[RMDB]
RNA sequence: GGGAACGACUCGAGUAGAGUCGAAAAUUACAACACACAAACCGCCUCCUCGGCGCAAGAGGACAACAGAGUGGAGAAUGUUGCUAAAUCAGCUCCACAAAACAUAAACUUGCCUGCAGAAUUGUGGGCAUACGCAUAACUUCGGUUAUGCGUAUGCAAAAGAAACAACAACAACAAC
Reactivity to 2A3 in 0.01 (KOAc 150mM, MgCl2 10mM, bicine 150mM(pH8.5), 24C), signal-to-noise 2, nucleotides 027 to 126: u180u140a050c010a080a000c000a030c000a010c000a070a060a080c080c000g010c010c000u010c030c010u000c010g010g010c060g050c050a010a020g020a000g000g060a000c000a010a000c000a000g080a030g020u010g000g010a010g000a060a070u050g040u050u050g100c060u020a040a050a030u160c130a080g060c000u000c010c040a000c040a010a040a000a000c010a060u180a030a080a000c000u040u070g010c010c010u020g000c010a020g070a300a300u270u070g050u000g010g000
Reactivity to DMS in 0.01 (KOAc 150mM, MgCl2 10mM, bicine 150mM(pH8.5), 24C), signal-to-noise 2, nucleotides 027 to 126: u000u010a110c070a060a090c080a070c010a080c140a090a110a100c300c010g090c000c000u000c000c000u000c030g000g060c020g010c170a040a240g000a000g010g010a290c020a010a010c010a040g000a220g060u010g000g010a000g000a070a090u010g000u000u000g030c180u000a000a080a010u000c160a170g000c000u010c000c000a020c020a070a040a110a060c090a070u010a120a020a120c150u000u000g000c030c000u000g000c030a080g000a070a150u000u000g040u000g000g000